[RMDB]
RNA sequence: GGGAACGACUCGAGUAGAGUCGAAAAACGCUGAAAAUAGGGGCCCUCGGAUUACUUGAUUUUGCACUUGAGCUUGAGUUUAGGAAUCUAACUCCUGGGAAUACCAAUACUCGUGUGUCUAGGUAUAGAACUAGUUAGAGUUCGCUCUAACUAGUUCAAAAGAAACAACAACAACAAC
Reactivity to 2A3 in 0.01 (KOAc 150mM, MgCl2 10mM, bicine 150mM(pH8.5), 24C), signal-to-noise 2, nucleotides 027 to 126: a010c030g000c050u040g050a100a020a050a080u120a090g010g010g020g010c000c000c000u040c010g060g020a050u010u090a090c020u050u050g020a050u110u140u080u130g010c040a030c030u030u060g030a020g090c010u030u030g070a020g080u020u050u110a020g010g010a080a030u050c000u040a020a070c030u010c020c020u020g040g000g000a050a070u050a090c000c000a050a010u060a050c020u040c090g070u080g010u010g010u050c020u060a020g100g000u000a080u040a140
Reactivity to DMS in 0.01 (KOAc 150mM, MgCl2 10mM, bicine 150mM(pH8.5), 24C), signal-to-noise 4, nucleotides 027 to 126: a120c070g000c070u000g010a040a050a090a120u010a110g020g020g010g010c040c030c010u010c070g020g000a080u000u010a040c050u010u000g010a070u000u000u000u000g010c070a050c050u000u000g010a110g010c090u000u000g000a040g010u000u010u010a080g010g010a080a080u010c060u000a060a110c080u000c020c090u000g000g010g000a110a070u000a070c040c020a070a090u000a040c070u000c090g020u000g010u000g000u000c060u000a080g010g010u000a080u000a110

The data come from the RNA Mapping Database (RMDB), library OK2TRN. This 177-nucleotide RNA was probed chemically with 2A3 and DMS. Conditions: 150 mM KOAc, 10 mM MgCl2 and 150 mM bicine (pH 8.5), 24 C. The DMS profile rests on 4,496 reads. Reactivities are given for positions 27 through 126. For 2A3 the reverse transcriptase was SuperScript II with manganese.